[RMDB]
RNA sequence: GGGAACGACUCGAGUAGAGUCGAAAAAUGGUAUCAAGCCCGCCCAAAGGUCAACUCAGGUGGGACAGAGAUCCACCGUAGAGUGUAAGGGCAAAAGUUGGCCUGACUGUAUUUCGAUCAGCAAGAACACAUCAUUCUUCUUCGGAAGAAUGAUGUGAAAAGAAACAACAACAACAAC
Reactivity to 2A3 in 0.01 (KOAc 150mM, MgCl2 10mM, bicine 150mM(pH8.5), 24C), signal-to-noise 1, nucleotides 027 to 126: a000u080g050g000u080a070u120c040a080a020g000c020c010c000g000c070c000c000a090a040a000g040g050u010c040a050a000c020u000c010a000g000g030u040g000g000g000a070c040a030g190a010g040a210u000c000c000a010c000c020g050u140a080g010a030g040u070g030u070a060a130g020g030g020c010a030a010a000a020g070u050u020g060g000c040c000u080g040a200c010u050g010u100a070u040u080u080c100g030a100u060c010a010g000c040a140a010g080a110a030
Reactivity to DMS in 0.01 (KOAc 150mM, MgCl2 10mM, bicine 150mM(pH8.5), 24C), signal-to-noise 2, nucleotides 027 to 126: a080u010g000g020u000a190u020c100a060a110g020c010c000c080g000c000c020c000a080a090a150g020g040u010c080a020a040c000u000c020a200g040g010u000g000g000g020a120c150a110g000a130g010a140u010c010c000a020c000c000g020u000a050g000a020g000u010g020u000a080a100g010g000g000c010a030a000a030a040g000u000u000g030g000c000c010u000g000a160c020u000g030u000a070u000u000u000c100g000a060u000c030a040g030c100a120a160g000a120a210